[RMDB]
Source: RMDB library OK2TRN, as collected in RNAgym.
The record gives the reactivity of an RNA of 177 nucleotides to DMS and 2A3.
Reactivities are given for positions 27 through 126.
For DMS, 3,642 sequencing reads were counted.
RNA sequence: GGGAACGACUCGAGUAGAGUCGAAAAGCGCGGGGCGACCAUGCUGGGGAGUCUGCGCCUUCCUUCAGCUUCCAUGGUGGUUCCCUUAGAAGUGACCAGGGGCAGUCCAUAGCACCUAGGCGCAGUGCUAGUCUCUGUUGUUCGCAACAGAGACUAGAAAAGAAACAACAACAACAAC
Reactivity to DMS in 0.01 (KOAc 150mM, MgCl2 10mM, bicine 150mM(pH8.5), 24C), signal-to-noise 2, nucleotides 027 to 126: g020c070g020c100g010g020g010g000c060g000a080c030c010a080u000g020c050u000g030g000g000g010a090g020u010c030u010g000c010g010c010c020u000u000c010c000u000u010c040a020g020c190u010u010c160c130a060u000g010g020u000g000g010u000u010c010c010c030u000u000a110g000a100a080g000u010g010a050c080c050a090g000g010g000g030c080a090g010u000c060c070a080u000a060g020c040a080c060c040u010a070g000g000c020g000c000a050g000u010g010
Reactivity to 2A3 in 0.01 (KOAc 150mM, MgCl2 10mM, bicine 150mM(pH8.5), 24C), signal-to-noise 2, nucleotides 027 to 126: g070c060g000c010g030g020g000g040c030g000a010c030c010a050u090g050c000u030g020g000g000g010a010g030u020c010u010g010c000g020c000c030u060u040c010c010u170u300c060a010g000c010u270u110c060c050a080u080g070g000u060g030g000u080u250c000c010c000u030u130a130g010a170a030g080u080g150a100c000c020a030g020g000g020g010c030a010g030u040c040c010a050u070a090g030c040a050c060c020u060a100g020g000c010g000c010a000g000u010g080
For 2A3, 2,028 sequencing reads were counted.